[RMDB]
RNA sequence: GGGAACGACUCGAGUAGAGUCGAAAAGGGAAGCGAAGACCCUAUAGAGCUUUACUGCAGGCUGUCGCUGGGACACGGUCGCUGAUGUGCAGAGUAGGUAGGAGACGUUACACAGGUACGUGCGCUACCCUUCCGUUUCAUUCGUGAAACGGAAGGGAAAAGAAACAACAACAACAAC
Reactivity to 2A3 in 0.01 (KOAc 150mM, MgCl2 10mM, bicine 150mM(pH8.5), 24C), signal-to-noise 2, nucleotides 027 to 126: g050g000g010a060a010g060c010g040a060a030g060a080c000c000c000u040a050u080a030g080a010g030c010u090u060u160a130c070u080g030c050a010g020g030c030u020g020u040c030g010c050u070g000g030g000a030c040a010c070g060g020u070c060g010c060u040g040a070u080g010u040g030c030a010g000a020g060u090a020g060g020u000a030g000g040a060g000a010c030g010u070u070a030c050a010c000a080g020g070u070a020c030g000u020g030c010g040c000u060a080
Reactivity to DMS in 0.01 (KOAc 150mM, MgCl2 10mM, bicine 150mM(pH8.5), 24C), signal-to-noise 3, nucleotides 027 to 126: g070g000g010a100a030g010c040g000a130a130g010a190c050c040c010u010a140u020a100g030a080g000c030u000u020u010a110c050u020g000c160a090g000g030c050u010g000u010c080g020c120u000g020g000g010a070c080a080c090g000g040u000c080g000c020u000g000a060u010g000u000g020c040a060g000a090g010u000a030g000g010u000a080g000g020a080g010a060c000g030u020u000a080c080a130c250a090g010g010u040a020c060g000u000g020c030g000c020u000a080